[RMDB]
RNA sequence: GGGAACGACUCGAGUAGAGUCGAAAAUCCCAAAGCGGAUUUAGCUCGGUUGGGAGAGCGCCAGACCGAAGAUCUGGGCGUCCUGUGUUCGAUCCACAGAAUUCGCACCAUAAACAACGGGAGAUUCGAGCUGGUAAUAUUUCGAUAUUACCAGCUCAAAAGAAACAACAACAACAAC
Reactivity to 2A3 in 0.01 (KOAc 150mM, MgCl2 10mM, bicine 150mM(pH8.5), 24C), signal-to-noise 6, nucleotides 027 to 126: u010c000c000c000a050a040a000g010c000g010g010a020u020u020u110a060g050c000u000c000g050g110u200u230g170g100g000a050g000a020g010c010g010c000c000a020g010a020c000c140g200a070a050g040a110u010c000u060g070g070g000c000g010u080c000c020u030g000u000g020u020u060c030g010a010u010c000c000a040c000a020g020a020a010u020u010c000g000c010a080c010c010a090u230a150a190a040c070a040a070c060g060g030g000a130g030a040u100u170c070
Reactivity to DMS in 0.01 (KOAc 150mM, MgCl2 10mM, bicine 150mM(pH8.5), 24C), signal-to-noise 3, nucleotides 027 to 126: u000c000c000c010a070a180a120g000c000g000g000a000u000u000u010a190g010c070u020c040g000g020u100u040g050g000g000a210g020a210g010c030g000c000c000a070g000a060c050c020g090a200a180g010a190u010c070u000g040g000g000c000g000u010c070c000u010g000u010g000u000u000c080g010a280u040c090c030a020c070a070g010a150a040u010u000c000g050c040a110c130c130a060u020a180a090a140c190a060a150c060g000g020g000a280g000a120u010u020c050